[RMDB]
Structure probing data (DMS and 2A3) for a 177-nucleotide construct.
The 2A3 profile rests on 1,914 reads.
The data come from the RNA Mapping Database (RMDB), library OK2TRN.
The reactions ran in a buffer of 150 mM KOAc, 10 mM MgCl2 and 150 mM bicine (pH 8.5), at 24 C.
Values cover nucleotides 27 to 126.
For DMS the reverse transcriptase was MarathonRT.
For DMS, 1,841 sequencing reads were counted.
RNA sequence: GGGAACGACUCGAGUAGAGUCGAAAAUCUGUCUGACGAGUGUUCUCCUGAACUCAUGGUACUGGAGAACAGUGUGAGUUCGGUGUGAGGAGUGCUCACACAUCACGCUCGUUGACAGGAAUGGCGGGCAGUGGAGACUAUUCGUAGUCUCCACUGCAAAAGAAACAACAACAACAAC
Reactivity to DMS in 0.01 (KOAc 150mM, MgCl2 10mM, bicine 150mM(pH8.5), 24C), signal-to-noise 2, nucleotides 027 to 126: u000c000u000g000u000c000u000g030a030c020g010a020g010u000g000u000u000c000u010c010c030u000g000a080a040c030u000c130a140u010g020g030u000a060c010u000g000g020a080g010a030a030c000a030g030u000g030u010g000a010g000u010u000c160g020g020u000g000u000g000a050g010g000a160g040u000g010c010u000c010a000c000a000c010a100u000c040a050c090g000c000u020c010g020u000u000g010a000c000a020g000g000a070a050u000g030g020c130g010g000
Reactivity to 2A3 in 0.01 (KOAc 150mM, MgCl2 10mM, bicine 150mM(pH8.5), 24C), signal-to-noise 1, nucleotides 027 to 126: u020c000u000g010u000c030u090g030a000c000g000a010g000u050g000u030u050c030u000c000c020u020g010a060a020c000u030c090a190u220g120g000u100a060c030u030g020g020a060g010a020a060c010a030g010u020g000u010g000a040g010u040u100c100g080g020u060g020u060g030a040g060g050a230g080u150g080c000u000c000a000c000a010c000a000u050c040a000c030g000c010u000c010g000u020u000g000a020c000a000g000g040a070a030u040g080g020c120g030g030